[RMDB]
RNA sequence: GGGAACGACUCGAGUAGAGUCGAAAAGUGCGCCGCUAUUCAGGGGUCAUUCGUAUCGUGUGAUGCAGAUUUUGUUGCGUACGUGAUCUCUCACCCCUGGGAGAUCUUUCAUACUGCACGUUAGAAAGGGAAUUCUAAAGUUCGCUUUAGAAUUCCCAAAAGAAACAACAACAACAAC
Reactivity to 2A3 in 0.01 (KOAc 150mM, MgCl2 10mM, bicine 150mM(pH8.5), 24C), signal-to-noise 4, nucleotides 027 to 126: g050u030g000c010g000c000c010g000c030u020a060u060u100c020a020g050g010g000g030u030c050a050u070u090c060g070u110a100u060c040g000u050g070u110g070a060u050g010c030a020g080a160u050u080u120u160g100u070u020g020c020g010u000a020c020g010u010g010a010u000c000u000c010u000c030a050c000c000c000c010u000g000g000g000a010g000a000u000c040u010u080u010c060a070u050a090c020u050g050c040a000c060g070u060u030a020g100a050a040a020
Reactivity to DMS in 0.01 (KOAc 150mM, MgCl2 10mM, bicine 150mM(pH8.5), 24C), signal-to-noise 2, nucleotides 027 to 126: g030u030g010c010g000c030c020g010c050u000a060u010u020c050a110g020g000g020g000u000c110a140u000u020c110g030u030a020u020c050g020u020g030u050g000a080u010g030c050a060g000a090u010u020u010u030g000u000u010g030c020g000u010a050c080g000u000g000a030u000c000u000c030u020c040a090c040c040c040c060u000g000g020g000a030g020a030u000c000u000u030u020c050a070u010a080c060u010g020c020a040c060g000u020u030a100g000a050a120a120
An RNA of 177 nucleotides, treated with 2A3 and DMS and read out base by base. It was measured as part of the RMDB library OK1LIB. The 2A3 profile rests on 3,387 reads.